The data come from the RNA Mapping Database (RMDB), library OK2TST. This 177-nucleotide RNA was probed chemically with 2A3 and DMS. For DMS the reverse transcriptase was MarathonRT. The DMS profile rests on 3,408 reads. For 2A3 the reverse transcriptase was SuperScript II with manganese. For 2A3, 1,582 sequencing reads were counted.
[RMDB]
RNA sequence: GGGAACGACUCGAGUAGAGUCGAAAAUCUAGUUUUUACCAAAAAUAAUGAACGUGUAGCCUCUAUCUCUCCGGACUCUGAUUAUUUUGUCGCUGAAGAUACUAGUGGUCUUCAAAAAGAUUUGGAAAUCUAAAGUUCAAUUCGUUGAACUUUAGAUAAAAGAAACAACAACAACAAC
Reactivity to 2A3 in 0.01 (KOAc 150mM, MgCl2 10mM, bicine 150mM(pH8.5), 24C), signal-to-noise 2, nucleotides 027 to 126: u090c000u000a070g000u070u000u010u060u290a090c030c010a060a060a040a080a100u240a100a150u160g030a110a010c080g020u030g000u050a010g020c000c000u000c010u020a080u070c010u010c000u000c050c030g060g010a040c040u020c030u070g070a030u010u120a050u100u140u130u070g040u010c030g000c080u040g000a020a050g010a020u050a090c020u040a080g080u050g250g020u010c000u030u000c000a030a040a010a010a040g090a000u120u120u150g050g040a080a290
Reactivity to DMS in 0.01 (KOAc 150mM, MgCl2 10mM, bicine 150mM(pH8.5), 24C), signal-to-noise 4, nucleotides 027 to 126: u000c050u010a110g000u000u000u000u010u020a130c070c030a030a070a070a100a100u010a070a080u010g000a080a050c090g020u000g010u000a100g010c030c010u000c030u010a060u000c050u000c020u000c040c030g020g010a050c060u000c060u000g000a050u000u000a090u000u000u000u020g000u000c050g020c160u010g000a040a020g010a050u000a040c060u010a090g030u010g020g020u000c020u000u010c010a030a070a080a110a090g000a120u000u010u000g020g020a080a110